The data come from the RNA Mapping Database (RMDB), library OK3TST. Chemical mapping of a 207-nucleotide RNA with DMS and 2A3. For DMS, 4,182 sequencing reads were counted. Reactivities are given for positions 27 through 156. The reactions ran in a buffer of 150 mM KOAc, 10 mM MgCl2 and 150 mM bicine (pH 8.5), at 24 C.
[RMDB]
RNA sequence: GGGAACGACUCGAGUAGAGUCGAAAAAGCAAAAACAUUGAGGAUAUGCUCUUUUGGUAUCGUGCCCCUCAUCCUAUCCCAAAGUUUAAGUUUGGCUGCAAGCAAUACAGAAAAUGGAGCAAGGAAAGGUACAACAAAAAUUACGAACCUCCUCUCAGAAUAGAGGUAUUUUCGAAUACCUCUAUUCAAAAGAAACAACAACAACAAC
Reactivity to DMS in 0.01 (KOAc 150mM, MgCl2 10mM, bicine 150mM(pH8.5), 24C), signal-to-noise 2, nucleotides 027 to 156: a060g040c050a000a050a080a110a090c050a160u000u010g020a100g030g030a090u000a120u000g000c030u000c050u000u010u000u000g010g020u000a040u010c020g040u000g000c020c030c010c040u000c080a170u000c030c020u010a160u000c020c010c020a110a110a120g020u000u000u000a080a110g000u000u000u010g020g040c020u000g000c040a070a140g040c050a050a070u000a110c040a090g000a040a040a040a070u010g000g000a100g040c070a050a080g020g010a030a070a070g010g010u000a040c060a050a180c050a030a040a030a050a150u020u000a060c030g010a060a070c030c000u000c010c000u000c020u010c030a300
Reactivity to 2A3 in 0.01 (KOAc 150mM, MgCl2 10mM, bicine 150mM(pH8.5), 24C), signal-to-noise 4, nucleotides 027 to 156: a000g090c070a080a090a010a000a030c060a080u060u080g000a030g010g020a070u060a040u210g040c030u040c050u060u080u090u090g070g010u110a080u190c100g010u030g060c050c000c030c010u020c010a080u040c000c020u050a080u110c020c000c020a030a090a010g060u120u140u100a110a040g000u000u070u050g020g010c010u040g030c040a010a070g020c000a010a070u060a100c010a030g100a050a060a010a030u120g010g000a010g020c050a020a030g080g000a050a050a030g010g000u020a050c010a080a000c040a050a140a060a020a050u170u070a060c020g020a020a030c000c000u000c020c010u050c020u020c000a010